This 207-nucleotide RNA was probed chemically with 2A3 and DMS. Source: RMDB library OK3TST, as collected in RNAgym. For DMS the reverse transcriptase was MarathonRT. Conditions: 150 mM KOAc, 10 mM MgCl2 and 150 mM bicine (pH 8.5), 24 C. For 2A3 the reverse transcriptase was SuperScript II with manganese. The DMS profile rests on 11,349 reads.

[RMDB]
RNA sequence: GGGAACGACUCGAGUAGAGUCGAAAACACUCUGUCCCCGCUUUCCUUGCUUCCACACUGCUCCUUGAUCAGACCAAGCAUGCUUCCACCUCGGGGCCUUUGCACUGGCUGUUCCUUCUCCCUGCAAUAUACUUCUCCCAAGGAUCUGCAAAGCACAAGCUAAAUUAGGAUUCGUCCUAAUUUAGCUAAAAGAAACAACAACAACAAC
Reactivity to 2A3 in 0.01 (KOAc 150mM, MgCl2 10mM, bicine 150mM(pH8.5), 24C), signal-to-noise 3, nucleotides 027 to 156: c040a000c030u100c040u060g080u070c020c000c000c000g020c000u040u090u030c010c000u020u080g040c010u090u040c030c000a030c000a020c060u060g010c000u050c020c010u050u060g030a060u080c040a030g100a140c020c010a060a020g010c020a030u080g010c000u110u060c010c020a070c020c060u060c060g000g000g020g010c000c030u050u080u080g020c050a060c060u020g020g020c010u020g050u060u070c010c000u100u020c040u030c010c010c000u020g010c030a050a020u080a020u030a200c020u070u030c010u040c030c030c000a000a020g040g010a060u040c000u090g020c040a060a060a000g090c100a030c030a080
Reactivity to DMS in 0.01 (KOAc 150mM, MgCl2 10mM, bicine 150mM(pH8.5), 24C), signal-to-noise 3, nucleotides 027 to 156: c080a100c040u000c040u010g020u000c010c010c000c060g020c050u000u000u000c030c020u010u000g010c030u000u000c010c010a090c060a080c060u000g020c030u000c030c000u000u010g010a090u000c070a100g010a160c030c050a070a130g020c050a090u000g000c030u000u000c030c010a070c030c020u020c060g010g020g040g000c040c020u010u000u010g030c030a090c030u000g020g020c010u010g020u000u010c020c020u000u000c030u000c020c010c010u000g010c030a040a090u000a120u000a090c040u010u000c030u000c000c010c020a110a140g010g010a070u000c030u000g020c050a050a060a120g010c050a090c070a100